This 207-nucleotide RNA was probed chemically with 2A3 and DMS.
The RNA was probed in 150 mM KOAc, 10 mM MgCl2 and 150 mM bicine (pH 8.5) at 24 C.
For DMS the reverse transcriptase was MarathonRT.
Source: RMDB library ARCHII, as collected in RNAgym.
[RMDB]
RNA sequence: GGGAACGACUCGAGUAGAGUCGAAAACACGCGGAAUUCGUUCCGCGUGCUGCCGCUUCUAUGGCCAAGUUGGUAAGGCGCCACACUAGUAAUGUGGAGAUCAUCGGUUCAAAUCCGAUUGGAAGCACCAUGUACAUACGAGCUUCGGCUCGUAUAAUAGACAACAAACGUUCGCGUUUGUUGUCUAAAAAGAAACAACAACAACAAC
Reactivity to 2A3 in 0.01 (KOAc 150mM, MgCl2 10mM, bicine 150mM(pH8.5), 24C), signal-to-noise 3, nucleotides 027 to 156: c010a000c000g010c000g010g010a010a010u060u040c160g030u070u010c010c000g000c000g000u000g010c010u020g020c010c030g000c010u000u000c010u000a010u030g000g000c000c000a060a000g050u200u160g210g190u200a020a000g020g000c000g030c000c000a000c000a000c010u090a010g090u280a090a120u040g000u000g000g000a000g000a030u160c000a010u000c000g000g000u010u020c000a000a000a000u000c000c000g000a000u000u000g000g000a000a000g030c000a020c010c010a070u160g060u170a050c030a060u010a000c000g000a000g010c010u050u180c240g140g010c000u040c000g000u000a000u000a010a000
Reactivity to DMS in 0.01 (KOAc 150mM, MgCl2 10mM, bicine 150mM(pH8.5), 24C), signal-to-noise 2, nucleotides 027 to 156: c000a020c010g060c030g000g020a000a030u000u000c300g040u000u010c000c000g020c000g030u000g040c000u000g000c100c030g030c000u000u000c050u000a070u000g000g010c050c020a060a280g020u010u000g000g000u000a110a300g000g010c000g010c000c000a030c000a020c000u000a300g000u010a050a020u020g020u000g010g000a080g000a120u000c080a020u000c020g040g060u000u020c120a090a300a140u010c000c010g000a020u000u030g020g000a120a050g000c050a190c020c030a100u010g020u000a100c120a030u000a030c010g020a040g000c010u000u010c300g030g020c020u000c000g000u000a000u000a050a160